[RMDB]
RNA sequence: GGGAACGACUCGAGUAGAGUCGAAAAUAUUUCGCGCCAUUGUAGCUCAGUGCUAGAGCGCUUCACUCGUAUAAAAAUACUGCCAUGAAGAGGUCCGCGGUACAAUCCCGCGUGGUGGCAAAAAAAACAUAAAGAAAUGUUUCGACAUUUCUUUAUGAAAAGAAACAACAACAACAAC
Reactivity to DMS in 0.01 (KOAc 150mM, MgCl2 10mM, bicine 150mM(pH8.5), 24C), signal-to-noise 3, nucleotides 027 to 126: u020a110u000u000u000c050g010c270g010c000c030a050u000u000g020u000a100g010c010u010c120a100g040u010g020c090u000a050g010a050g010c010g000c020u010u000c000a030c100u000c140g020u010a020u010a030a070a120a100a090u000a030c070u000g020c160c070a140u000g010a030a030g000a030g000g010u000c030c020g000c010g000g000u000a080c240a090a210u000c180c010c010g000c010g010u000g010g020u000g010g000c000a000a000a000a010a020a060a060a160
Reactivity to 2A3 in 0.01 (KOAc 150mM, MgCl2 10mM, bicine 150mM(pH8.5), 24C), signal-to-noise 1, nucleotides 027 to 126: u150a050u010u150u070c050g000c020g000c080c010a030u010u110g060u030a010g000c010u010c160a070g010u040g140c030u080a020g000a010g030c000g000c040u000u020c000a040c020u050c060g050u060a050u060a110a300a070a080a010u050a060c030u060g030c020c000a050u050g020a050a050g010a030g050g030u000c020c000g000c000g000g000u040a070c040a050a050u020c000c010c000g000c000g020u020g000g000u010g010g000c000a000a000a150a020a000a030a000a000
Conditions: 150 mM KOAc, 10 mM MgCl2 and 150 mM bicine (pH 8.5), 24 C. Chemical mapping of a 177-nucleotide RNA with DMS and 2A3. Reactivities are given for positions 27 through 126. Source: RMDB library M2PK90, as collected in RNAgym.